[RMDB]
RNA sequence: GGGAACGACUCGAGUAGAGUCGAAAACUGGGAGUCUGGAGCCGCCGCAGCUACACUCCCCGAUAGCGAUGCGCGGCACGCUGUGCUGUCACCGCUGGCAGAGGUGCUCCCAUUGCGGGCCAGGAUGCCACGUAUGUUUGUUCGCAAACAUACGUGGAAAAGAAACAACAACAACAAC
Reactivity to DMS in 0.01 (KOAc 150mM, MgCl2 10mM, bicine 150mM(pH8.5), 24C), signal-to-noise 3, nucleotides 027 to 126: c040u000g030g010g000a040g010u010c130u010g020g000a080g020c000c060g020c030c030g010c020a190g000c000u010a030c070a060c030u000c010c000c000c020g000a160u000a010g000c010g010a040u000g010c210g020c010g000g010c010a040c020g010c210u030g010u000g010c010u000g010u000c020a040c010c010g010c020u010g000g000c190a100g000a110g010g000u010g000c190u000c010c000c010a160u010u000g020c020g020g020g010c080c090a050g020g000a140u000g010
Reactivity to 2A3 in 0.01 (KOAc 150mM, MgCl2 10mM, bicine 150mM(pH8.5), 24C), signal-to-noise 2, nucleotides 027 to 126: c050u000g010g000g000a030g020u060c090u080g020g030a000g000c010c020g090c050c050g000c040a010g020c000u040a040c010a010c030u040c010c020c010c000g070a060u050a010g000c010g060a080u010g040c070g000c010g120g040c020a000c020g300c140u270g000u020g020c010u010g000u050c020a000c040c000g010c020u010g000g000c050a020g070a170g060g020u030g040c000u010c030c000c000a010u020u100g000c020g000g000g050c040c020a050g120g070a090u240g100